[RMDB]
RNA sequence: GGGAACGACUCGAGUAGAGUCGAAAAAAGGUCAUCGCCCUGACGGGUGAUUGACCUGGUUGAUGAUUAGUCCCGCACCGCGUGAGGCAGGAAACUGAGCAGCGAAAAGGGGCAGCUGCGGACGGCAAUCCCAUGAUGCCUUCGGGCAUCAUGGGAUAAAAGAAACAACAACAACAAC
Reactivity to DMS in 0.01 (KOAc 150mM, MgCl2 10mM, bicine 150mM(pH8.5), 24C), signal-to-noise 1, nucleotides 027 to 126: a050a010g010g000u000c000a030u020c000g000c000c000c000u000g000a130c300g020g000g000u000g000a020u000u000g020a000c000c000u000g000g000u000u000g000a070u000g000a060u010u000a180g000u000c040c030c010g000c040a110c050c030g000c040g000u000g020a140g040g000c010a060g000g000a090a060a170c070u000g000a080g000c150a100g000c070g020a090a070a040a090g040g000g020g020c060a120g020c000u000g000c020g010g000a040c010g030g000c080a070
The data come from the RNA Mapping Database (RMDB), library RFM100. Chemical mapping of a 177-nucleotide RNA with DMS. Values cover nucleotides 27 to 126. DMS adducts were read by reverse transcription with MarathonRT. The DMS profile rests on 1,530 reads.